Structure probing data (2A3 and DMS) for a 177-nucleotide construct.

RNA sequence: GGGAACGACUCGAGUAGAGUCGAAAAACUAUAUUGCAAAACACACUCUGAACUGCAUUCGCCAGCUGAGUGGCUACAAAGACGGCUCUUACGUGAAGGUGAACAAUGGUGUUGAGGACAAUGAACAAAUGGUAGGUGCAUUCGUGCACCUACCAUUAAAAGAAACAACAACAACAAC
Reactivity to 2A3 in 0.01 (KOAc 150mM, MgCl2 10mM, bicine 150mM(pH8.5), 24C), signal-to-noise 2, nucleotides 027 to 126: a000c090u090a080u010a020u070u090g000c050a000a000a230a000c030a000c010a010c000u140c010u130g300a240a130c040u080g040c010a050u090u000c050g010c060c030a000g010c050u020g030a010g000u070g010g170c000u020a130c050a020a190a080g050a060c030g020g010c030u000c000u050u000a030c030g020u050g190a060a050g030g000u080g090a090a050c030a040a150u070g010g000u050g020u070u010g040a100g070g140a030c060a000a190u100g000a100a000c050a020
Reactivity to DMS in 0.01 (KOAc 150mM, MgCl2 10mM, bicine 150mM(pH8.5), 24C), signal-to-noise 2, nucleotides 027 to 126: a130c040u040a170u020a040u020u000g000c060a100a010a130a080c130a050c040a030c080u020c030u000g000a070a210c080u010g010c010a090u040u000c060g030c000c030a120g050c060u000g000a030g010u060g010g060c020u000a070c130a050a040a010g020a080c080g000g000c000u010c030u010u010a100c130g030u010g000a100a090g000g030u000g030a060a050c110a030a040u030g000g000u000g000u000u000g000a050g030g000a110c150a090a110u020g010a020a100c230a100

For DMS, 1,925 sequencing reads were counted. The reactions ran in a buffer of 150 mM KOAc, 10 mM MgCl2 and 150 mM bicine (pH 8.5), at 24 C. Source: RMDB library OK1LIB, as collected in RNAgym.